An RNA of 207 nucleotides, treated with DMS and 2A3 and read out base by base. For 2A3 the reverse transcriptase was SuperScript II with manganese. The DMS profile rests on 1,704 reads. The data come from the RNA Mapping Database (RMDB), library OK3TST.

RNA sequence: GGGAACGACUCGAGUAGAGUCGAAAACAAGCUGUCAAUACUUCCGAAGGAUUGGAUGAAAAUGCUGGUAUCCAUUCAGAAAGUUUAGAUGCAAAAAAUGUUUUACAUGCUUACGAUCAAAUGAUGCGUAACUUUGACCGUGCAAGAAUUCCAGCUACCAUCAGUGAUCGUUCGCGAUCACUGAUGGAAAAGAAACAACAACAACAAC
Reactivity to DMS in 0.01 (KOAc 150mM, MgCl2 10mM, bicine 150mM(pH8.5), 24C), signal-to-noise 1, nucleotides 027 to 156: c040a120a230g030c000u000g010u000c030a160a110u000a080c040u000u010c040c060g010a160a210g020g010a100u010u000g010g000a100u000g030a110a070a100a050u020g000c030u000g000g010u000a290u010c030c010a030u000u000c010a180g000a150a020a080g030u000u000u000a090g000a090u000g040c030a000a050a020a080a160a140u000g010u000u000u000u000a060c010a130u000g020c060u000u000a010c010g030a020u000c010a010a000a010u000g000a050u000g040c200g020u000a090a170c120u010u000u000g020a060c010c040g070u000g020c010a080a110g000a190a050u010u000c040c020a070g010c020u000a190
Reactivity to 2A3 in 0.01 (KOAc 150mM, MgCl2 10mM, bicine 150mM(pH8.5), 24C), signal-to-noise 4, nucleotides 027 to 156: c050a030a040g020c020u070g050u110c040a040a040u040a150c050u040u020c040c030g090a130a050g120g010a070u070u110g010g020a020u050g080a080a070a040a010u170g000c010u010g000g010u000a010u000c010c010a010u010u020c010a010g120a090a060a010g040u060u080u230a050g030a040u050g030c090a010a010a010a010a030a150u140g060u020u140u050u020a040c050a030u030g060c010u040u060a000c010g010a010u040c040a060a220a150u290g070a070u140g140c060g060u060a020a050c040u050u020u050g020a030c000c000g030u030g040c040a060a070g060a150a070u150u050c010c000a020g050c010u050a050